RNA sequence: GGGAACGACUCGAGUAGAGUCGAAAAGAUUCGGCGGCCCUGUCAUGAGGCCGAAACGAAGGCACGUACCCCUUCGAAUGGCGUCGGGGAGUCAGCGGCUACAUAUGCGCCUAAUGCUGGCAUCCGGGAGAACCCUCAUCCUUCGGGAUGAGGGUAAACAAUCCAUCUAGUUCGCUAGAUGGAUUGUAAAAGAAACAACAACAACAAC
Reactivity to DMS in 0.01 (KOAc 150mM, MgCl2 10mM, bicine 150mM(pH8.5), 24C), signal-to-noise 3, nucleotides 027 to 156: g010a170u010u000c020g010g020c020g010g020c000c010c000u010g030u000c240a150u010g010a030g000g030c030c000g010a010a040a070c040g010a050a000g020g000c070a120c080g010u010a280c030c050c000c020u000u000c020g030a130a150u000g010g000c050g040u010c040g000g000g020g010a140g010u000c010a060g070c030g030g010c040u000a160c060a170u010a080u000g040c080g000c010c030u010a090a120u010g010c010u010g020g000c000a060u000c010c010g000g040g050a230g020a080a140c000c010c020u010c000a020u000c000c000u000u000c300g030g020g030a020u000g000a000g000g020g010u000a000a030
Reactivity to 2A3 in 0.01 (KOAc 150mM, MgCl2 10mM, bicine 150mM(pH8.5), 24C), signal-to-noise 4, nucleotides 027 to 156: g060a100u080u110c040g060g020c010g030g010c070c000c020u030g070u040c070a040u060g030a030g030g020c050c070g030a040a000a000c020g010a010a000g020g020c070a030c230g130u190a080c030c020c000c010u010u010c010g040a040a020u040g020g030c080g120u020c010g000g030g000g000a110g010u010c000a000g020c000g030g040c050u160a050c100a130u300a110u270g080c050g050c020c010u100a160a060u270g010c000u010g000g030c020a040u000c000c000g000g000g010a170g050a030a020c000c000c000u000c000a000u000c010c000u050u090c250g060g000g010a000u010g000a010g000g000g000u000a000a000

Structure probing data (DMS and 2A3) for a 207-nucleotide construct. For DMS, 5,317 sequencing reads were counted. The reactions ran in a buffer of 150 mM KOAc, 10 mM MgCl2 and 150 mM bicine (pH 8.5), at 24 C. For 2A3, 2,463 sequencing reads were counted. It was measured as part of the RMDB library M2RFPK.